RNA sequence: GGGAACGACUCGAGUAGAGUCGAAAAAACAAGGCCAAGUAAUAGCUAGACAUAAGGUUAGGGAGUUUAACAUAAAUCCAGUCAACACGGCAACUAAGUCAAAAUUACAUCCCAGUGUAUUUUAUGAGUUACGAGCACAGUUCGCUGUGCUCGUAACAAAAGAAACAACAACAACAAC
Reactivity to DMS in 0.01 (KOAc 150mM, MgCl2 10mM, bicine 150mM(pH8.5), 24C), signal-to-noise 1, nucleotides 027 to 126: a010a010c030a050a080g000g020c060c000a030a050g000u060a060a060u030a100g020c010u000a130g040a070c180a050u000a220a040g030g000u000u000a100g000g040g000a000g000u070u000u000a000a110c070a090u000a010a070a030u140c050c090a080g000u040c040a080a040c120a060c070g000g010c000a020a020c080u000a030a040g000u000c100a020a010a000a200u010u010a000c100a060u000c000c040c050a190g010u000g000u000a190u110u000u000u000a070u000g000a300
Reactivity to 2A3 in 0.01 (KOAc 150mM, MgCl2 10mM, bicine 150mM(pH8.5), 24C), signal-to-noise 2, nucleotides 027 to 126: a000a090c030a030a010g040g000c000c000a030a020g050u020a180a300u060a090g000c000u050a080g050a040c000a010u300a300a170g210g000u300u090a000g040g070g000a070g110u210u080u000a200a000c040a000u080a210a070a010u150c070c000a000g050u000c000a000a000c100a170c070g060g070c000a000a000c000u040a000a110g090u060c000a090a000a000a000u020u010a130c000a000u030c000c000c000a120g000u070g040u300a080u000u020u080u080a130u170g140a140
Structure probing data (DMS and 2A3) for a 177-nucleotide construct. DMS adducts were read by reverse transcription with MarathonRT. For DMS, 1,022 sequencing reads were counted. It was measured as part of the RMDB library OK1LIB. The 2A3 profile rests on 565 reads. The RNA was probed in 150 mM KOAc, 10 mM MgCl2 and 150 mM bicine (pH 8.5) at 24 C.